[RMDB]
RNA sequence: GGGAACGACUCGAGUAGAGUCGAAAAGAAGCAUUACUUCGUUAUUUUCAAACUUUACUUAGAACAAAAGUUGCUGGUACAACACGUCAGUUAAGACAGUCAGAUUUAGAUAAUGUUAUUCAAAAUGUAAAUCCUGCUGCUUUCCAGGGCAAUGUGGAGACGUGGUAAAAUUCGUUUUACCACGUCUAAAAGAAACAACAACAACAAC
Reactivity to 2A3 in 0.01 (KOAc 150mM, MgCl2 10mM, bicine 150mM(pH8.5), 24C), signal-to-noise 4, nucleotides 027 to 156: g040a020a010g000c030a060u140u150a080c040u050u060c030g070u080u100a160u080u070u060u080c060a090a080a010c010u020u040u090a050c020u080u110a080g080a270a080c040a060a110a060a050g030u020u020g000c020u020g020g000u090a040c020a080a010c010a040c110g050u050c040a060g000u020u070a070a000g060a100c000a020g010u100c040a010g050a080u040u090u100a020g030a070u070a060a040u090g040u070u100a070u060u100c020a070a020a060a080u060g030u070a010a070a040u050c000c020u030g040c020u000g000c000u040u060u000c020c010a000g000g000g060c030a050a090u100g010u060g060g040
Reactivity to DMS in 0.01 (KOAc 150mM, MgCl2 10mM, bicine 150mM(pH8.5), 24C), signal-to-noise 2, nucleotides 027 to 156: g010a070a050g000c040a160u000u000a250c010u020u000c050g020u000u000a260u000u000u000u000c030a110a050a050c050u000u010u010a040c020u000u000a120g010a050a180c080a030a060a080a140g010u010u000g030c000u000g020g000u000a080c090a140a020c020a030c030g020u000c020a100g000u000u000a080a140g010a020c040a060g020u020c140a030g010a040u000u000u000a030g000a080u020a030a230u000g000u000u030a160u010u000c040a040a030a180a070u000g000u000a060a030a040u000c020c020u000g010c000u000g000c010u000u020u010c080c040a090g010g020g030c080a030a050u050g020u000g020g000
Description
The data come from the RNA Mapping Database (RMDB), library OK3TST. Chemical mapping of a 207-nucleotide RNA with 2A3 and DMS. DMS adducts were read by reverse transcription with MarathonRT. The reactions ran in a buffer of 150 mM KOAc, 10 mM MgCl2 and 150 mM bicine (pH 8.5), at 24 C. 2A3 adducts were read by reverse transcription with SuperScript II with manganese.